[RMDB]
RNA sequence: GGGAACGACUCGAGUAGAGUCGAAAAGUCAGCUGAGAUACGUUUAUUCUCCUUAUCUGGGUUGCGCGAGUCCCAACUACCGAUGAUAAUGAGCGGUUUUUUUGUCUCACCUUCAGGAUAGAGUACAACCAAAAGGAGCUUUCGAGCUCCUUUUGGUAAAAGAAACAACAACAACAAC
Reactivity to DMS in 0.01 (KOAc 150mM, MgCl2 10mM, bicine 150mM(pH8.5), 24C), signal-to-noise 2, nucleotides 027 to 126: g000u010c040a030g010c030u000g000a050g030a070u000a050c170g000u000u000u000a120u010u000c100u000c090c070u020u010a030u000c090u000g010g000g020u000u000g010c160g020c070g020a170g020u000c020c020c000a140a100c100u010a040c020c000g010a090u010g000a100u030a060a130u000g000a060g010c040g000g010u000u030u000u040u000u000u000g020u000c010u000c020a060c080c070u000u020c090a140g000g010a050u010a040g000a200g050u000a090c120a050
Description
An RNA of 177 nucleotides, treated with DMS and read out base by base. For DMS the reverse transcriptase was MarathonRT. The RNA was probed in 150 mM KOAc, 10 mM MgCl2 and 150 mM bicine (pH 8.5) at 24 C.